[RMDB]
RNA sequence: GGGAACGACUCGAGUAGAGUCGAAAAGGGGUCACGAUCUCUAGCGUGCCUUAUUGAGCCUUGGAUUUAUUAGCUGAAGCCUCCACGGCUAAUUGUCAGGCUUUAUAAGGUCGGGUCGUGACGGAGGCACCCAAAGGUACAUCUUCGGAUGUACCAACUUUGCCAGAGAGUUCGCUCUCUGGCAAAGAAAAGAAACAACAACAACAAC
Reactivity to 2A3 in 0.01 (KOAc 150mM, MgCl2 10mM, bicine 150mM(pH8.5), 24C), signal-to-noise 1, nucleotides 027 to 156: g050g000g010g010u000c000a000c000g000a000u010c090u010c040u160a100g210c050g270u300g030c040c000u020u010a000u010u030g000a000g000c000c010u100u140g040g000a080u200u180u110a000u000u120a020g000c000u030g030a070a020g010c010c000u020c000c010a010c010g050g000c000u000a000a000u010u010g050u030c180a110g010g050c000u020u010u010a010u000a000a000g010g030u000c020g040g000g000u000c010g000u000g000a010c010g000g000a010g000g030c000a040c000c010c020a110a150a000g010g000u000a000c000a020u010c000u040u080c220g160g000a030u020g010u000a000c000c000a000a000